RNA sequence: GGGAACGACUCGAGUAGAGUCGAAAAGCUUGUGUGAUUGUGGAGGAACAAGUAGUGAUUGAAAAUUCUACCGAGCCAGUGGAGGGCUGUAGAAAAUGCCAGUACCACCGGGAUAAGUCUGGAGACCAGUAUGGUCUCUGUUCGCAGAGACCAUACUAAAAGAAACAACAACAACAAC
Reactivity to 2A3 in 0.01 (KOAc 150mM, MgCl2 10mM, bicine 150mM(pH8.5), 24C), signal-to-noise 3, nucleotides 027 to 126: g040c030u050u030g020u010g030u060g130a200u180u130g020u120g060g080a100g030g030a100a010c030a110a020g020u030a010g030u040g080a130u100u050g060a090a070a060a090u080u020c010u010a040c030c030g040a010g000c000c010a030g000u080g070g030a070g050g040g000c000u020g010u050a030g080a010a060a010a010u080g020c000c000a000g010u000a080c000c020a020c020c020g030g010g040a050u040a090a010g040u000c030u040g020g060a060g040a070c030c010
Reactivity to DMS in 0.01 (KOAc 150mM, MgCl2 10mM, bicine 150mM(pH8.5), 24C), signal-to-noise 6, nucleotides 027 to 126: g010c030u010u000g020u000g020u010g000a120u010u010g020u010g010g010a100g010g000a150a040c060a040a050g020u000a060g010u010g010a110u010u000g000a070a080a090a140u000u000c010u010a030c020c090g000a080g010c030c020a080g010u000g020g010a130g010g000g010c020u000g010u000a050g000a070a040a080a060u010g000c050c010a050g010u010a080c040c030a040c040c050g000g000g000a090u000a040a090g010u000c030u000g000g000a130g010a130c120c100
An RNA of 177 nucleotides, treated with 2A3 and DMS and read out base by base. Conditions: 150 mM KOAc, 10 mM MgCl2 and 150 mM bicine (pH 8.5), 24 C. Source: RMDB library OK2TST, as collected in RNAgym. Values cover nucleotides 27 to 126. High DMS reactivity at an A or C suggests that its Watson-Crick edge is free.